Source information:
This 170-nucleotide RNA was probed chemically with 2A3 and DMS. It was measured as part of the RMDB library 15KLIB. 2A3 adducts were read by reverse transcription with SuperScript II with manganese.
RNA sequence: GGGAACGACUCGAGUAGAGUCGAAAAAGAAGAACCAGAAUCCCUCAAGAGAGAGGAGAAUCCCCAUGACGCUGGAAGAGACUUCCGGGUAACCAAGUCAAGGAGAAGGAACGGUAGAAAAGAGCGACACGCUGACCGUUCGCGGUCAGCAAAAGAAACAACAACAACAAC
Reactivity to 2A3 in 0.01 (KOAc 150mM, MgCl2 10mM, bicine 150mM(pH8.5), 24C), signal-to-noise 4, nucleotides 027 to 129: a000g210a000a000g030a000a000c070c040a010g030a070a060u080c010c000c000u050c050a050a030g130a010g000a000g020a020g030g000a000g010a010a050u000c000c020c000c030a100u170g050a010c030g010c050u020g040g020a050a010g040a040g030a030c080u060u000c030c000g000g000g010u030a020a040c020c030a080a000g030u040c030a020a050g070g000a030g000a000a020g060g000a030a040c110g000g010u090a020g060a060a080a010a000g050a000g000c050g000a010c040a030c130
Reactivity to DMS in 0.01 (KOAc 150mM, MgCl2 10mM, bicine 150mM(pH8.5), 24C), signal-to-noise 5, nucleotides 027 to 129: a100g020a080a080g000a030a030c110c070a020g020a120a140u040c040c020c000u030c070a060a000g020a080g030a060g000a080g000g010a120g030a090a020u000c040c010c010c070a180u030g020a030c160g010c040u030g000g000a100a040g050a130g010a070c060u000u030c050c040g000g000g000u030a080a070c080c110a140a120g000u020c060a050a120g040g000a090g000a060a090g020g030a050a050c000g010g060u060a070g030a030a090a110a000g020a000g010c050g010a040c150a120c090